[RMDB]
Chemical mapping of a 177-nucleotide RNA with DMS and 2A3. Reactivities are given for positions 27 through 126. The RNA was probed in 150 mM KOAc, 10 mM MgCl2 and 150 mM bicine (pH 8.5) at 24 C. High DMS reactivity at an A or C suggests that its Watson-Crick edge is free. For DMS the reverse transcriptase was MarathonRT.
RNA sequence: GGGAACGACUCGAGUAGAGUCGAAAAGAUAUGGAGAUUGAAUUCCGAUAAGAUCCAUUCGGAAACGAAUGAAGAUCUUUUGACGGAAGUCAAUCUCCUAAGUCAAAUCCAUCGUUCGCGAUGGAAAGUAAUAUCUCGACUUCGGUCGAGAUAUUACAAAAGAAACAACAACAACAAC
Reactivity to DMS in 0.01 (KOAc 150mM, MgCl2 10mM, bicine 150mM(pH8.5), 24C), signal-to-noise 2, nucleotides 027 to 126: g000a040u000a300u000g000g000a050g020a000u000u000g000a010a030u010u000c000c000g000a250u000a020a010g010a010u000c000c000a040u000u020c000g010g030a130a070a120c000g010a020a020u010g000a120a180g010a010u000c000u000u000u000u030g010a210c230g000g000a010a000g000u000c010a000a010u000c000u000c000c000u030a000a090g000u020c030a130a130a170u000c010c000a000u000c000g020u000u010c270g040c010g040a020u000g000g000a020a040a150
Reactivity to 2A3 in 0.01 (KOAc 150mM, MgCl2 10mM, bicine 150mM(pH8.5), 24C), signal-to-noise 2, nucleotides 027 to 126: g020a000u020a040u060g000g030a020g010a010u030u040g000a020a060u040u000c020c200g110a060u120a300a010g000a000u000c000c000a000u010u010c000g000g060a070a010a030c000g000a000a000u040g090a080a070g010a010u000c030u040u100u100u160g270a200c260g000g010a010a000g010u000c010a000a000u000c000u000c020c000u010a010a010g000u000c020a010a020a180u000c000c020a000u010c000g070u090u080c300g000c040g190a000u010g020g000a040a030a000